[RMDB]
Chemical mapping of a 177-nucleotide RNA with 2A3 and DMS. The RNA was probed in 150 mM KOAc, 10 mM MgCl2 and 150 mM bicine (pH 8.5) at 24 C. It was measured as part of the RMDB libraries RFM100 and RFMREP.

RNA sequence: GGGAACGACUCGAGUAGAGUCGAAAAGGAGGAAGAGAAAACAAUAGUGAUUCCGUAAGUAGCGGCGAGCGAACGCGGAUUAGCCCAAACCGAUAAUGUUCCGGCAUUGUCGGGGUUGUAGGACUACAGAGCGUCUAAAUUUCGAUUUAGACGCUCUAAAAGAAACAACAACAACAAC
Reactivity to 2A3 in 0.01 (KOAc 150mM, MgCl2 10mM, bicine 150mM(pH8.5), 24C), signal-to-noise 1, nucleotides 027 to 126: g010g020a000g030g020a090a060g040a000g020a040a010a030a010c080a000a030u090a050g060u060g030a070u180u000c000c000g010u020a020a000g000u000a000g000c000g130g020c240g050a020g030c000g020a000a000c010g000c000g000g000a000u000u020a000g030c010c000c000a070a100a040c000c000g020a010u000a010a010u000g010u080u120c130c160g090g000c020a000u000u000g000u000c020g000g000g000g000u010u030g000u000a010g090g000a000c030u050a010c030
Reactivity to DMS in 0.01 (KOAc 150mM, MgCl2 10mM, bicine 150mM(pH8.5), 24C), signal-to-noise 3, nucleotides 027 to 126: g000g000a050g020g020a050a030g000a030g000a060a020a020a100c040a070a090u020a030g030u000g030a140u030u000c000c000g000u000a000a050g000u010a080g010c000g000g040c300g000a300g000c010g000a110a100c170g000c010g010g000a040u010u000a090g000c000c020c020a050a080a130c050c000g000a000u010a000a010u010g020u000u000c200c110g000g000c000a010u000u000g010u020c000g000g000g020g030u000u020g030u020a100g000g020a180c040u060a050c300